[RMDB]
RNA sequence: GGGAACGACUCGAGUAGAGUCGAAAAGCGUCCCCAGCGCCGAGGGCCGGUGCCCGGCGUGCUAACCAUGCGUCUGCGGCCAAGGCCGAGCUCCGAGCGGCGUUAGCGCCCUCUGCGAAGCGCCCUGUCUCGUGCACUAUUUCGAUAGUGCACGAGAAAAAGAAACAACAACAACAAC
Reactivity to DMS in 0.01 (KOAc 150mM, MgCl2 10mM, bicine 150mM(pH8.5), 24C), signal-to-noise 2, nucleotides 027 to 126: g010c060g000u000c000c000c010c110a130g000c000g000c000c050g000a050g000g000g010c010c030g030g000u010g000c000c030c020g000g000c050g010u000g030c040u050a150a190c150c170a230u030g040c020g010u000c000u000g020c130g000g000c000c030a240a050g000g000c060c000g000a050g030c030u020c040c070g000a090g060c060g000g020c000g000u000u040a110g000c080g000c000c000c000u010c050u030g000c020g010a060a200g020c100g010c020c010c000u010g000
Reactivity to 2A3 in 0.01 (KOAc 150mM, MgCl2 10mM, bicine 150mM(pH8.5), 24C), signal-to-noise 4, nucleotides 027 to 126: g040c020g060u100c010c000c000c010a030g030c000g000c030c010g000a070g000g030g010c000c030g070g060u170g000c020c010c010g000g030c000g020u020g030c020u020a050a060c050c020a060u150g010c020g010u050c090u210g050c160g050g000c000c030a120a090g040g000c020c000g010a030g010c010u030c040c040g030a030g020c020g020g000c020g050u030u100a070g030c020g020c050c000c010u030c010u030g020c020g020a070a020g010c010g010c000c000c010u060g050

Record summary:
Conditions: 150 mM KOAc, 10 mM MgCl2 and 150 mM bicine (pH 8.5), 24 C. Structure probing data (DMS and 2A3) for a 177-nucleotide construct. For DMS, 2,698 sequencing reads were counted.